This 177-nucleotide RNA was probed chemically with DMS and 2A3. The DMS profile rests on 2,918 reads. The RNA was probed in 150 mM KOAc, 10 mM MgCl2 and 150 mM bicine (pH 8.5) at 24 C. Values are in units of 0.01, from 0 to 300, in steps of 10. High DMS reactivity at an A or C suggests that its Watson-Crick edge is free. For 2A3, 2,345 sequencing reads were counted. Values cover nucleotides 27 to 126.

RNA sequence: GGGAACGACUCGAGUAGAGUCGAAAAUGAAAUGGCGCUGGCGCAACGCGUAUUGCGUGAUUUUGCUGGUGCGGCGCUGGAUAAAAUCCGCGUUGACUCAAAAUUGACUUACGAUUUGCUGGUGGAAGUCAUGCGAUUAUUUCGAUAAUCGCAUGACAAAAGAAACAACAACAACAAC
Reactivity to DMS in 0.01 (KOAc 150mM, MgCl2 10mM, bicine 150mM(pH8.5), 24C), signal-to-noise 3, nucleotides 027 to 126: u020g000a090a100a120u010g000g020c020g000c020u000g010g010c050g000c110a060a010c120g010c010g000u000a050u010u010g000c080g010u020g000a070u000u000u000u010g000c240u000g000g020u000g020c000g000g010c000g030c000u030g030g020a050u000a040a040a040a300u000c000c010g000c040g010u000u000g000a070c020u000c030a030a030a020a060u000u010g000a070c030u000u000a040c030g000a080u000u010u010g010c000u000g030g000u000g000g000a100a110
Reactivity to 2A3 in 0.01 (KOAc 150mM, MgCl2 10mM, bicine 150mM(pH8.5), 24C), signal-to-noise 3, nucleotides 027 to 126: u120g030a020a030a080u100g090g020c010g010c040u020g060g000c030g020c100a050a040c080g040c000g060u060a090u080u290g060c170g000u020g030a040u010u010u050u090g050c100u070g040g040u090g190c000g000g010c000g000c130u260g010g000a010u080a080a230a010a030u000c000c000g000c010g020u000u010g030a040c010u030c060a010a000a000a040u040u060g030a020c030u020u040a010c010g070a080u070u040u150g000c000u040g010g020u010g070g040a110a000